[RMDB]
The data come from the RNA Mapping Database (RMDB), library OK1LIB. This 177-nucleotide RNA was probed chemically with 2A3 and DMS. The 2A3 profile rests on 15,517 reads.
RNA sequence: GGGAACGACUCGAGUAGAGUCGAAAAACGCGAGGUGCGAGCGGGGGUGAUCUCGGUCGGAGCGCUGGUGACCUAUCUGCUCUACAUCGAGCUGUUGUACACGCCGAUAGGCGAACUGGCGCAAAUGAAGAAGUUAUGGAUUCGUCCAUAACUUCUUAAAAGAAACAACAACAACAAC
Reactivity to 2A3 in 0.01 (KOAc 150mM, MgCl2 10mM, bicine 150mM(pH8.5), 24C), signal-to-noise 9, nucleotides 027 to 126: a000c080g020c030g020a050g020g060u090g040c040g020a060g030c040g020g020g000g010g020u060g070a090u030c030u010c040g070g010u040c030g040g060a070g010c010g000c010u010g010g030u030g020a090c000c000u010a010u010c000u010g010c000u010c010u040a010c010a080u030c030g070a070g150c140u140g050u010u010g000u000a010c060a020c170g000c010c000g020a040u030a040g010g000c030g030a090a020c010u020g010g000c010g000c020a030a060a080u220g020
Reactivity to DMS in 0.01 (KOAc 150mM, MgCl2 10mM, bicine 150mM(pH8.5), 24C), signal-to-noise 9, nucleotides 027 to 126: a110c090g010c050g020a070g010g020u000g000c070g010a100g010c060g000g000g000g010g020u020g010a050u010c040u000c060g010g000u000c040g000g010a150g010c010g010c000u000g000g020u000g010a300c020c010u010a040u000c010u000g000c010u010c300u000a010c010a030u010c040g010a120g030c110u040g000u000u000g010u000a040c220a110c160g000c010c030g000a040u010a020g010g010c040g010a070a020c030u000g000g000c020g020c030a050a040a050u060g010